[RMDB]
RNA sequence: GGGAACGACUCGAGUAGAGUCGAAAACAACCCAACUCCUACUCAAUACGUCCUCGUCGAACAGAACGGUAACAUGUUUUCCGAACAUCCGCGCUUGGGUAUACGAGUAUACACCUUACCCAACCCUCCAACCACCUAAAGUUCGCUUUAGGUGGAAGCCCAAAUUACAGUUCGCUGUAAUUUGGGCAAAAGAAACAACAACAACAAC
Reactivity to DMS in 0.01 (KOAc 150mM, MgCl2 10mM, bicine 150mM(pH8.5), 24C), signal-to-noise 1, nucleotides 027 to 156: c040a100a270c010c000c030a130a090c070u000c000c040u010a020c010u000c030a050a200u010a100c020g090u000c040c000u000c030g010u000c060g000a040a170c070a080g020a100a190c010g000g030u000a040a070c130a110u030g000u010u000u010u010c020c080g010a040a070c070a090u000c040c000g040c050g040c110u000u000g000g070g040u000a110u010a080c100g010a100g060u000a100u000a110c070a110c050c080u000u010a020c000c000c000a060a100c000c000c020u000c000c000a080a250c020c000a010c000c010u000a000a010a020g040u000u000c260g000c000u000u000u000a020g000g030u000g030g010a030a010
Reactivity to 2A3 in 0.01 (KOAc 150mM, MgCl2 10mM, bicine 150mM(pH8.5), 24C), signal-to-noise 4, nucleotides 027 to 156: c030a020a070c000c010c010a030a070c030u060c020c030u030a070c000u020c080a040a120u070a120c030g040u040c010c010u030c030g060u010c020g040a050a030c020a110g040a070a000c040g030g000u070a050a030c050a140u100g050u050u040u060u040c030c020g020a040a020c020a060u050c020c030g040c030g020c060u030u030g010g010g020u010a020u020a070c060g010a020g090u030a020u040a040c090a050c040c000u020u040a010c000c000c000a010a040c010c010c000u010c010c020a050a070c000c000a000c000c000u000a000a000a000g020u040u080c110g050c100u000u000u000a000g000g000u010g000g010a010a010